[RMDB]
The record gives the reactivity of an RNA of 177 nucleotides to 2A3 and DMS. Conditions: 150 mM KOAc, 10 mM MgCl2 and 150 mM bicine (pH 8.5), 24 C. The 2A3 profile rests on 1,325 reads. DMS (dimethyl sulfate) methylates the pairing face of unpaired adenines and cytosines. For DMS, 1,857 sequencing reads were counted.

RNA sequence: GGGAACGACUCGAGUAGAGUCGAAAAUAAAGGCUUUUAAAGUUCUAGAGGCCACGGAGCUUUCCAGCCAGGACGGUGAACUUGGCCCUCAAGGGAGGGCAGCACAGAGAGGAAGGCCCUGAGCUGGGCUACCGUAGUAUUUCGAUACUACGGUAGCAAAAGAAACAACAACAACAAC
Reactivity to 2A3 in 0.01 (KOAc 150mM, MgCl2 10mM, bicine 150mM(pH8.5), 24C), signal-to-noise 1, nucleotides 027 to 126: u220a020a090a000g060g020c000u020u100u050u100a090a170a040g030u130u040c020u030a100g050a060g260g050c040c020a000c070g030g000a010g000c020u000u080u000c010c010a000g030c000c010a000g000g050a000c020g070g030u070g000a050a070c040u040u070g120g010c000c000c010u000c000a130a280g300g240g000a010g000g040g030c000a000g000c010a020c000a000g150a000g010a030g200g030a200a060g090g000c010c030c010u000g030a040g000c010u030g000g010
Reactivity to DMS in 0.01 (KOAc 150mM, MgCl2 10mM, bicine 150mM(pH8.5), 24C), signal-to-noise 2, nucleotides 027 to 126: u010a100a070a110g000g000c010u020u000u020u010a020a080a100g010u000u000c050u000a180g020a110g000g000c030c040a080c150g020g000a090g000c030u000u020u010c010c020a060g010c030c020a040g010g000a080c040g010g020u010g000a060a140c040u020u010g010g020c000c000c000u010c020a240a120g000g010g000a040g010g030g020c000a020g000c070a110c080a110g010a180g010a090g000g020a160a140g010g000c020c000c010u000g010a110g020c000u000g000g000